RNA sequence: GGGAACGACUCGAGUAGAGUCGAAAAUGCAUCCAUCUUUACUUAAAAACUUUUUUGCAUUGUAGACCAUGUCAUCCAAUUCUUCCUCAGUGGCUGUGUCUGCAGGAUUAGUGCUCACAUGACCAAAGAGAAGAGUCCAAUUCGUUGGACUCUUCUCAAAAGAAACAACAACAACAAC
Reactivity to 2A3 in 0.01 (KOAc 150mM, MgCl2 10mM, bicine 150mM(pH8.5), 24C), signal-to-noise 1, nucleotides 027 to 126: u030g000c000a060u020c030c020a200u030c090u060u240u140a250c100u120u120a020a020a010a120a150c030u110u070u040u020u170u120g010c020a050u000u090g030u050a010g000a030c000c030a080u190g030u010c010a020u030c020c010a030a100u030u050c080u060u060c010c000u060c060a080g020u010g020g030c010u040g030u080g000u100c030u070g040c010a000g000g000a030u080u080a080g040u010g010c010u040c010a050c020a040u080g060a120c020c000a030a110a000
Reactivity to DMS in 0.01 (KOAc 150mM, MgCl2 10mM, bicine 150mM(pH8.5), 24C), signal-to-noise 1, nucleotides 027 to 126: u000g000c030a030u000c030c120a060u000c030u000u000u000a070c130u020u000a040a060a120a050a060c110u000u010u000u000u000u000g000c050a100u000u010g010u000a070g000a110c030c090a100u020g000u000c060a040u020c050c080a050a120u010u000c060u010u000c010c010u050c060a080g000u000g030g000c030u000g000u010g020u000c050u000g000c040a040g010g000a080u000u020a080g030u000g000c040u000c030a010c060a070u000g000a130c050c040a090a120a110